[RMDB]
This 207-nucleotide RNA was probed chemically with DMS and 2A3. DMS adducts were read by reverse transcription with MarathonRT. For 2A3, 2,761 sequencing reads were counted. For 2A3 the reverse transcriptase was SuperScript II with manganese.
RNA sequence: GGGAACGACUCGAGUAGAGUCGAAAAGGUUAGCGCGUUGGGGUCGCCUAAACUCAAAGCCUCAAUGACACAUUUGGUUAAUUGCAGGUUGGUCCAUCCUCGCCGCCUGAGCGCGUCGACGUCCACAGGAUCUCCAAAUCGUUGAAGAAAGGCGUCCAUGACCUUAUGUAUUCGUACAUAAGGUCAUAAAAGAAACAACAACAACAAC
Reactivity to DMS in 0.01 (KOAc 150mM, MgCl2 10mM, bicine 150mM(pH8.5), 24C), signal-to-noise 2, nucleotides 027 to 156: g030g000u000u010a050g040c030g000c090g040u000u010g010g010g030g000u000c040g000c040c000u010a060a050a040c030u020c040a060a120a140g010c000c000u000c010a040a050u010g000a200c080a070c100a190u010u010u010g020g020u010u010a070a070u000u000g010c070a050g010g020u000u000g070g010u020c060c040a140u020c030c000u000c040g030c020c010g050c030c000u010g010a120g010c050g030c000g010u010c010g010a090c010g010u010c020c010a120c060a140g000g020a050u000c040u000c110c040a040a050a080u000c080g000u010u010g000a070a130g000a080a090a110g000g010c010g010u000c000c050
Reactivity to 2A3 in 0.01 (KOAc 150mM, MgCl2 10mM, bicine 150mM(pH8.5), 24C), signal-to-noise 4, nucleotides 027 to 156: g060g000u030u040a030g040c050g000c030g040u030u040g020g050g010g020u010c020g010c030c000u090a150a140a050c030u040c100a070a110a030g020c010c000u030c050a020a030u050g020a000c020a010c030a260u100u110u250g080g010u070u130a240a050u050u110g050c070a000g000g000u130u160g020g030u060c030c030a080u060c010c020u010c010g000c020c010g000c020c020u100g060a040g020c120g010c000g040u060c010g000a060c060g030u080c040c010a080c020a050g010g040a020u000c020u000c040c030a030a070a090u160c150g020u040u120g050a040a040g060a050a070a030g020g000c020g000u000c010c010